[RMDB]
RNA sequence: GGGAACGACUCGAGUAGAGUCGAAAAAGCAGAUUAGGGCGUACAUGGAUGGUAAAAUACCGGUUGCCACUGUCUCUAAUGAGUCAAGCGCUUCAAGUAAUACAGUUAAACCAGUUGCAAGUGCAUGAUUAUCCUCCUGGUUCGCCAGGAGGAUAAUAAAAGAAACAACAACAACAAC
Reactivity to 2A3 in 0.01 (KOAc 150mM, MgCl2 10mM, bicine 150mM(pH8.5), 24C), signal-to-noise 3, nucleotides 027 to 126: a000g090c050a000g000a020u040u090a080g090g000g010c040g070u050a010c020a050u170g010g030a070u060g060g130u160a120a160a020a050u100a070c040c000g080g030u030u080g040c030c000a020c010u010g070u000c020u000c000u110a170a170u210g060a070g040u010c040a080a040g000c010g010c000u030u030c020a020a030g030u040a070a080u110a170c070a030g000u030u100a130a010a000c020c000a050g020u060u030g060c030a110a020g030u010g020c020a070u070g010
Reactivity to DMS in 0.01 (KOAc 150mM, MgCl2 10mM, bicine 150mM(pH8.5), 24C), signal-to-noise 5, nucleotides 027 to 126: a080g020c110a030g000a090u010u010a060g020g000g010c070g020u020a060c070a080u020g030g000a080u010g010g010u000a030a090a090a060u040a060c040c080g010g000u000u000g020c020c040a090c040u000g020u000c010u010c030u010a090a080u020g020a100g000u010c070a070a090g000c150g010c010u000u000c060a030a050g010u030a040a070u030a110c120a070g000u030u010a070a070a100c080c040a050g000u010u030g020c060a020a040g010u000g010c030a110u010g000